[RMDB]
RNA sequence: GGGAACGACUCGAGUAGAGUCGAAAAAGCAUGCAGUGCGUCGUUGGCCGGCACUUUAAUCUCGGUUGAUCCAAUUUUAACUGGCGAAAAUAACUACGCUCUCGCUGCUUAAUCGAAGCACAGUAGAUUGAAGCUUAAUCCUUACACAAGGUGUUUGCUAUCGGACAUACUUCGGUAUGUCCGAUAGAAAAGAAACAACAACAACAAC
Reactivity to DMS in 0.01 (KOAc 150mM, MgCl2 10mM, bicine 150mM(pH8.5), 24C), signal-to-noise 1, nucleotides 027 to 156: a100g000c050a060u020g050c020a110g010u010g050c040g000u000c040g000u000u000g050g020c060c000g020g040c090a100c090u000u000u000a060a020u000c010u000c000g030g000u010u000g000a090u000c070c060a050a050u010u000u000u000a060a080c040u000g030g020c010g000a060a100a050a100u020a050a070c070u000a060c010g020c010u000c040u000c100g050c030u000g030c020u000u000a030a100u000c060g000a130a080g020c020a030c050a090g010u000a120g000a100u000u000g000a080a110g000c070u000u000a070a080u000c030c020u000u020a110c090a080c100a020a060g000g010u000g000u000u000u000g000
Reactivity to 2A3 in 0.01 (KOAc 150mM, MgCl2 10mM, bicine 150mM(pH8.5), 24C), signal-to-noise 5, nucleotides 027 to 156: a000g110c100a080u300g010c010a000g010u000g000c000g010u010c010g000u020u010g030g000c000c000g040g000c010a020c050u070u050u070a060a070u070c140u120c230g040g020u050u260g040a070u060c010c010a030a050u010u030u060u110a230a220c030u020g020g000c050g080a040a070a050a090u190a060a020c010u000a000c030g000c000u010c000u040c130g010c020u010g000c000u020u020a010a020u070c040g040a020a000g040c050a030c030a110g050u090a020g030a150u020u090g100a050a000g010c000u040u090a030a040u080c000c010u050u100a060c110a010c010a120a030g070g010u030g050u050u050u100g060
This 207-nucleotide RNA was probed chemically with DMS and 2A3. The RNA was probed in 150 mM KOAc, 10 mM MgCl2 and 150 mM bicine (pH 8.5) at 24 C. For DMS, 2,597 sequencing reads were counted. Source: RMDB library RSTRND, as collected in RNAgym.